[RMDB]
RNA sequence: GGGAACGACUCGAGUAGAGUCGAAAACCCCGGUCAGCCUCCCGAGUUCCUCUUCUUCUUCCCUGCUGAGGUUCUUCCCUCCGGCGGCCAGUUGCUUCUUCUUGUUCUCGAGGGCCUUCCUUCGUCGUUACUCACAACUUCGGUUGUGAGAAAAGAAACAACAACAACAAC
Reactivity to DMS in 0.01 (KOAc 150mM, MgCl2 10mM, bicine 150mM(pH8.5), 24C), signal-to-noise 8, nucleotides 027 to 129: c010c010c010c110g020g020u050c060a130g040c050c020u000c000c000c000g000a090g020u030u020c010c000u000c020u000u000c020u030u010c020u000u000c010c000c000u000g040c070u000g040a070g020g020u000u000c030u020u020c050c000c020u000c050c040g000g000c100g040g060c020c030a080g020u000u030g010c070u000u020c000u000u000c040u010u020g010u040u010c030u020c060g030a120g010g010g000c050c080u030u030c010c020u040u050c110g000u040c070g000u020u020a140
Reactivity to 2A3 in 0.01 (KOAc 150mM, MgCl2 10mM, bicine 150mM(pH8.5), 24C), signal-to-noise 7, nucleotides 027 to 129: c000c000c000c000g010g060u090c050a040g020c000c000u050c000c020c000g020a030g040u070u020c000c000u030c000u060u020c010u040u020c010u020u040c020c000c000u000g030c040u040g040a050g020g040u070u040c000u050u060c010c000c000u030c000c010g030g010c020g020g020c010c000a020g020u040u070g070c020u030u040c000u030u000c000u020u080g060u120u010c020u010c020g020a070g000g040g030c010c000u040u030c010c000u050u070c050g090u020c010g030u030u080a060